[RMDB]
RNA sequence: GGGAACGACUCGAGUAGAGUCGAAAACUUAUUUUUGCCUCACAUAUUGUGCAUAUCCUUCUUCAUUAACUUAAAAAGAACUCACCCCAUGGAUCAUCUGAGGUCAGGAGUUCGAGACCAGCCUGACCAACAUGGUGAAACCCUGUCUCUGCUAAAACUACUGGAGGAGUUUCGACUCCUCCAGUAGAAAAGAAACAACAACAACAAC
Reactivity to 2A3 in 0.01 (KOAc 150mM, MgCl2 10mM, bicine 150mM(pH8.5), 24C), signal-to-noise 1, nucleotides 027 to 156: c000u020u040a080u090u120u010u050u020g060c030c000u010c090a000c020a050u170a050u120u090g020u030g000c010a010u010a040u130c050c010u030u040c020u080u050c020a070u040u260a120a100c050u060u080a030a030a030a030a030g100a120a050c020u010c000a040c010c110c000c000a020u070g000g000a030u010c000a000u000c000u020g000a000g030g000u020c000a000g000g000a000g020u100u140c040g050a020g000a060c050c000a010g130c000c020u000g020a020c030c000a020a020c050a020u110g030g010u000g000a010a000a000c020c000c000u020g000u000c020u020c020u220g070c000u300a010a300a010a010
The record gives the reactivity of an RNA of 207 nucleotides to 2A3. The 2A3 profile rests on 469 reads.